Structure probing data (DMS and 2A3) for a 177-nucleotide construct. The data come from the RNA Mapping Database (RMDB), library TTRDES. 2A3 adducts were read by reverse transcription with SuperScript II with manganese. Reactivities are given for positions 27 through 126.

RNA sequence: GGGAACGACUCGAGUAGAGUCGAAAAGAUAUGGAAGUACGGACUCGAUAAGAUCCACUCGGAAACGAGUGAAGAUCUUUUGACGAGUCGUACUUCCUAAGUCAAAGCGAGCCCUUCGGGGCUCGCAUCUAUACGAAAACUUCGGUUUUCGUAUAGAAAAAGAAACAACAACAACAAC
Reactivity to DMS in 0.01 (KOAc 150mM, MgCl2 10mM, bicine 150mM(pH8.5), 24C), signal-to-noise 2, nucleotides 027 to 126: g000a050u000a230u010g000g000a030a010g010u000a000c000g030g020a040c000u000c000g030a150u010a010a010g010a020u000c000c000a000c000u000c000g010g000a060a050a150c000g000a020g010u010g010a160a130g010a000u000c000u000u000u010u000g000a180c120g010a000g010u000c000g010u000a010c000u000u000c000c000u000a000a040g010u000c010a140a160a130g000c000g020a010g020c000c000c000u000u000c260g050g010g010g010c000u000c000g010c010a000
Reactivity to 2A3 in 0.01 (KOAc 150mM, MgCl2 10mM, bicine 150mM(pH8.5), 24C), signal-to-noise 1, nucleotides 027 to 126: g000a000u040a000u060g000g010a020a000g000u030a000c050g170g300a130c010u000c020g130a160u060a300a010g000a010u000c000c010a010c000u010c000g010g020a020a020a010c000g020a010g030u020g050a030a060g000a010u000c030u000u050u070u200g300a140c040g000a000g010u000c000g000u000a000c010u010u000c010c000u010a010a000g000u000c030a000a100a070g010c010g000a010g060c030c000c000u020u110c300g030g020g040g000c000u000c000g000c000a000